[RMDB]
RNA sequence: GGGAACGACUCGAGUAGAGUCGAAAAAUUUCUGCUAAUCCCGAUGUCAUACGUAUGAUUAUUAAUAUCUUUUUCAAUAUUUUCAUUUUUGACAUGGAGAGAAACAUCGAUAAACGGAUGCUCGUUACACCGAUCGGGUGUUCGCACCCGAUCGGUGAAAAGAAACAACAACAACAAC
Reactivity to 2A3 in 0.01 (KOAc 150mM, MgCl2 10mM, bicine 150mM(pH8.5), 24C), signal-to-noise 1, nucleotides 027 to 126: a000u100u000u000c080u040g150c150u130a060a040u060c000c000c010g040a040u000g060u000c170a000u000a080c150g250u250a040u020g000a000u010u010a000u020u080a000a150u110a270u300c300u080u300u150u030u300c040a040a040u040a060u020u100u000u000c040a020u020u000u000u000u020g020a000c000a000u000g010g010a150g000a000g040a110a260a030c040a060u040c000g170a000u040a060a290a000c000g040g000a000u000g060c130u060c040g020u020u080a000